[RMDB]
RNA sequence: GGGAACGACUCGAGUAGAGUCGAAAACGAUGAGGGGAGAAGAGAAGUGGGCAGGUGGGUCGAAGACGCCCGCCCCAAGGCGAACGCCCGUCGCAUGUUUGCAUGCGGGGGUCAGACCCCCUUACCGCAUUUUACGCUCAUUCGUGAGCGUAAAAUGAAAAGAAACAACAACAACAAC
Reactivity to 2A3 in 0.01 (KOAc 150mM, MgCl2 10mM, bicine 150mM(pH8.5), 24C), signal-to-noise 2, nucleotides 027 to 126: c030g050a050u160g010a110g010g020g020g010a080g020a180a030g060a040g030a200a000g060u190g020g010g000c040a030g040g040u090g030g040g020u050c030g050a060a030g110a010c010g040c000c000c000g050c000c000c010c000a010a000g050g010c020g020a040a030c050g020c020c030c020g160u090c010g000c000a010u030g060u200u250u300g110c010a000u030g000c000g000g010g000g010g010u040c030a020g000a070c000c000c000c000c000u000u030a030c030c000g040
Reactivity to DMS in 0.01 (KOAc 150mM, MgCl2 10mM, bicine 150mM(pH8.5), 24C), signal-to-noise 3, nucleotides 027 to 126: c040g020a050u010g010a050g010g020g000g010a050g010a200a130g000a060g010a090a140g010u000g020g000g000c110a030g020g040u010g010g020g010u000c080g010a090a140g010a180c070g000c010c000c030g040c060c040c020c020a060a090g000g010c030g020a090a090c240g000c020c010c010g020u000c020g010c010a010u010g010u000u020u040g020c030a030u000g000c000g010g000g020g010g010u000c050a110g000a280c090c010c010c010c010u000u010a030c020c010g000
An RNA of 177 nucleotides, treated with 2A3 and DMS and read out base by base. For 2A3, 2,378 sequencing reads were counted. Reactivities are given for positions 27 through 126. For 2A3 the reverse transcriptase was SuperScript II with manganese. For DMS the reverse transcriptase was MarathonRT. For DMS, 2,392 sequencing reads were counted.